[RMDB]
RNA sequence: GGGAACGACUCGAGUAGAGUCGAAAAGAUAUGGAGAGUCCUUUUGACGUCUAUCCAUUCGGAAACGAAUGGUAAGGACGAUAAGGAUGCUCCUAAGUCAAAAGUUAUGAUCUUCGGAUCAUAACAACGUGUAUUCAAGCUUCGGCUUGAAUACACGAAAAGAAACAACAACAACAAC
Reactivity to 2A3 in 0.01 (KOAc 150mM, MgCl2 10mM, bicine 150mM(pH8.5), 24C), signal-to-noise 1, nucleotides 027 to 126: g010a020u030a020u130g000g000a000g000a010g030u050c000c000u030u030u110u190g290a140c070g000u000c000u030a090u000c000c020a010u020u000c000g050g000a030a040a040c010g000a010a010u020g060g000u040a190a080g060g010a010c030g000a000u020a010a000g020g000a010u050g020c000u000c000c000u030a080a010g050u050c020a050a060a020a060g040u000u020a000u000g000a000u000c010u050u120c300g170g000a000u000c010a000u000a000a010c000a000a030
Reactivity to DMS in 0.01 (KOAc 150mM, MgCl2 10mM, bicine 150mM(pH8.5), 24C), signal-to-noise 2, nucleotides 027 to 126: g000a020u000a300u010g020g010a000g000a190g010u010c000c010u000u000u000u000g010a130c090g040u000c000u020a300u020c000c000a000u000u000c000g060g000a080a100a120c010g010a010a000u000g000g000u000a060a150g000g000a010c010g000a090u000a000a010g030g000a040u000g000c020u000c000c000u000a020a110g010u000c020a050a080a150a160g010u000u000a010u000g000a020u000c000u000u030c200g010g000a000u010c000a000u000a000a020c000a050a060
Structure probing data (2A3 and DMS) for a 177-nucleotide construct. The reactions ran in a buffer of 150 mM KOAc, 10 mM MgCl2 and 150 mM bicine (pH 8.5), at 24 C. 2A3 adducts were read by reverse transcription with SuperScript II with manganese. The data come from the RNA Mapping Database (RMDB), library TTRDEL. DMS adducts were read by reverse transcription with MarathonRT.